[RMDB]
RNA sequence: GGGAACGACUCGAGUAGAGUCGAAAAAUAAAGAGGAGACCGCUGGACUCGCCGCCCCAGCCCGGGUAAGCCACAGUUCCGACCGAAGGGGACGAGUGGGGAGAAGGGCGCCCCGAGGGGGGUCAUCGCAGCGCGCCGUUCGCGGCGCGCAAAAGAAACAACAACAACAAC
Reactivity to DMS in 0.01 (KOAc 150mM, MgCl2 10mM, bicine 150mM(pH8.5), 24C), signal-to-noise 1, nucleotides 027 to 129: a120u130a100a100a040g000a130g090g000a010g070a140c190c180g000c060u000g030g030a090c020u000c000g120c030c100g000c000c000c020c000a300g010c110c000c130g000g000g000u060a000a170g000c000c000a000c010a180g000u050u120c000c010g000a160c060c130g020a080a050g020g000g040g080a000c110g030a160g040u050g000g030g070g010a120g000a180a210g010g000g000c150g000c020c070c000c060g050a080g050g040g060g040g000g010u070c030a000u000c120g120c000a010
Chemical mapping of a 170-nucleotide RNA with DMS. The reactions ran in a buffer of 150 mM KOAc, 10 mM MgCl2 and 150 mM bicine (pH 8.5), at 24 C. Source: RMDB library 15KLIB, as collected in RNAgym.